This 177-nucleotide RNA was probed chemically with DMS and 2A3. For DMS the reverse transcriptase was MarathonRT.
RNA sequence: GGGAACGACUCGAGUAGAGUCGAAAACACACAAGGUUCGCCUUGUGUGCAAGAAUAGACGAAUACUACCGUAGAAGUAUUCAGGUCACAUAACUAGGGAAAUGGCGUUCUGCUUCGGCAGAACGAAUAAGUACUAAGCUUUCGAGCUUAGUACUUAAAAAGAAACAACAACAACAAC
Reactivity to DMS in 0.01 (KOAc 150mM, MgCl2 10mM, bicine 150mM(pH8.5), 24C), signal-to-noise 9, nucleotides 027 to 126: c010a000c000a000c000a010a000g010g010u000u010c260g030c010c000u000u000g010u010g010u000g010c060a070a060g010a130a100u010a090g010a070c050g000a020a020u000a010c010u000a080c110c300g010u010a080g010a080a030g010u000a010u000u000c000a090g020g010u000c020a080c130a080u000a050a070c090u000a060g000g000g010a070a060a070u010g000g010c010g000u000u000c000u000g010c000u000u010c180g030g000c000a000g000a000a000c000g010a030a040
Reactivity to 2A3 in 0.01 (KOAc 150mM, MgCl2 10mM, bicine 150mM(pH8.5), 24C), signal-to-noise 8, nucleotides 027 to 126: c000a000c000a000c000a000a000g030g000u040u060c130g130c050c000u010u000g010u000g010u000g010c010a010a050g070a080a080u120a140g040a020c020g010a010a000u010a010c020u030a060c020c100g170u150a070g060a230a000g030u010a010u030u000c020a010g140g070u030c020a030c020a130u190a190a060c080u100a090g080g030g150a050a120a110u160g140g000c010g000u010u000c000u000g000c000u020u040c120g080g000c000a000g000a000a000c000g000a000a000
The reactions ran in a buffer of 150 mM KOAc, 10 mM MgCl2 and 150 mM bicine (pH 8.5), at 24 C. It was measured as part of the RMDB library M2PK50.